The data come from the RNA Mapping Database (RMDB), library OK2TST. An RNA of 177 nucleotides, treated with 2A3 and DMS and read out base by base. The 2A3 profile rests on 595 reads. The reactions ran in a buffer of 150 mM KOAc, 10 mM MgCl2 and 150 mM bicine (pH 8.5), at 24 C. For 2A3 the reverse transcriptase was SuperScript II with manganese. Values cover nucleotides 27 to 126. For DMS the reverse transcriptase was MarathonRT.
RNA sequence: GGGAACGACUCGAGUAGAGUCGAAAAUUCCUGGUAAUCUUCCGGGAUAUCCAGAUGCAGGGUCGACUGAAUAAACUUCUGCGCCAGCGGCGUUUUCGGAUGCGAGAACACUUCACUUACCGUGUCCCUCUACGUCCACAUUCGUGUGGACGUAGAGAAAAGAAACAACAACAACAAC
Reactivity to 2A3 in 0.01 (KOAc 150mM, MgCl2 10mM, bicine 150mM(pH8.5), 24C), signal-to-noise 1, nucleotides 027 to 126: u090u020c030c000u000g040g000u110a190a120u050c080u150u000c030c050g000g010g000a040u060a080u090c000c000a040g030a140u120g060c030a020g080g010g030u160c090g050a160c030u140g040a040a040u210a100a100a000c040u180u130c040u080g050c030g120c000c030a040g030c020g040g020c050g030u020u020u080u110c060g000g000a040u130g080c040g000a040g000a130a010c090a040c060u160u170c120a130c120u070u080a090c010c020g000u010g130u130c020c070
Reactivity to DMS in 0.01 (KOAc 150mM, MgCl2 10mM, bicine 150mM(pH8.5), 24C), signal-to-noise 1, nucleotides 027 to 126: u010u010c000c000u000g030g030u000a060a100u030c140u000u000c060c040g020g000g000a050u010a060u000c050c040a040g010a100u020g010c040a080g000g020g010u000c000g040a170c050u010g020a110a060u010a140a120a090c010u000u020c050u000g010c010g020c040c110a060g030c080g000g030c200g000u000u000u000u000c020g000g010a050u010g000c030g020a080g000a070a060c140a030c040u030u010c050a100c070u000u000a130c220c010g000u000g000u000c020c000